[RMDB]
The data come from the RNA Mapping Database (RMDB), library TTRDES. This 177-nucleotide RNA was probed chemically with 2A3 and DMS.
RNA sequence: GGGAACGACUCGAGUAGAGUCGAAAAGAUAUGGAGUCGAUGAAGUCCUACCCACCCUCCUAGUCGGAAACGACUAGUGAGGAGGGAUGGAGACUCCUAAGUCAAAAGUAGCCUCUUCGGAGGCUACCUUAUAUUCCUUGUUCGCAAGGAAUAUAAGAAAAGAAACAACAACAACAAC
Reactivity to 2A3 in 0.01 (KOAc 150mM, MgCl2 10mM, bicine 150mM(pH8.5), 24C), signal-to-noise 5, nucleotides 027 to 126: g060a030u130a070u230g000g020a000g010u010c050g070a190u160g130a100a010g060u020c040c000u030a180c060c020c020a110c020c000c010u000c010c000u000a000g010u000c010g010g020a070a060a110c010g000a010c010u000a000g060u130g080a000g000g000a010g010g000g000a000u030g020g010a040g000a030c000u000c010c000u040a200a040g080u070c070a090a060a040a110g000u010a000g000c020c000u020c030u120u130c300g120g000a000g000g010c000u000a000c000
Reactivity to DMS in 0.01 (KOAc 150mM, MgCl2 10mM, bicine 150mM(pH8.5), 24C), signal-to-noise 9, nucleotides 027 to 126: g010a070u010a300u010g010g000a020g020u000c010g010a160u010g020a210a170g000u000c010c010u000a300c050c050c080a300c120c000c000u000c010c000u000a000g010u000c000g000g000a100a100a170c010g010a010c000u000a000g010u020g020a010g000g010a120g000g010g000a080u000g000g000a130g000a010c000u000c000c000u000a040a100g010u000c070a100a090a120a180g000u000a010g000c000c000u000c010u000u010c190g020g000a010g010g010c000u000a000c010

Values cover nucleotides 27 to 126. The reactions ran in a buffer of 150 mM KOAc, 10 mM MgCl2 and 150 mM bicine (pH 8.5), at 24 C.